[RMDB]
RNA sequence: GGGAACGACUCGAGUAGAGUCGAAAACAACUACCAGUACGGUGGCAUCGCCACGCGGCGUACGGGUUACGCCCUGUUGCGGGACUAAAAUAGCGUUUGGAUUAAGCCCUUCUUCCAGACGUGCGCGAGCGAUACCAGGAUUCGUCCUGGUAUCGCUAAAAGAAACAACAACAACAAC
Reactivity to DMS in 0.01 (KOAc 150mM, MgCl2 10mM, bicine 150mM(pH8.5), 24C), signal-to-noise 2, nucleotides 027 to 126: c160a090a130c090u000a040c000c020a070g020u010a100c210g000g040u000g010g010c050a070u000c100g020c010c010a060c030g000c300g030g000c000g020u000a000c060g010g020g010u020u000a040c050g010c020c020c030u000g030u000u000g010c040g000g000g010a100c150u010a060a040a070a060u000a160g020c020g000u000u000u000g030g010a040u010u010a050a140g010c050c060c030u030u000c070u000u000c000c000a010g000a010c000g020u010g010c230g010c120g010
Reactivity to 2A3 in 0.01 (KOAc 150mM, MgCl2 10mM, bicine 150mM(pH8.5), 24C), signal-to-noise 1, nucleotides 027 to 126: c040a010a020c040u120a040c000c000a080g160u190a050c070g040g010u020g020g010c040a110u110c050g000c020c020a000c030g050c040g070g030c010g000u020a070c070g170g000g000u080u000a000c030g000c000c020c030u020g000u080u040g000c000g000g020g010a060c080u190a160a060a190a210u130a080g000c020g010u010u010u000g010g020a050u010u050a090a080g110c000c000c000u020u060c000u010u010c010c010a020g000a070c050g030u060g030c020g020c070g050
Chemical mapping of a 177-nucleotide RNA with DMS and 2A3. The 2A3 profile rests on 1,211 reads. The reactions ran in a buffer of 150 mM KOAc, 10 mM MgCl2 and 150 mM bicine (pH 8.5), at 24 C.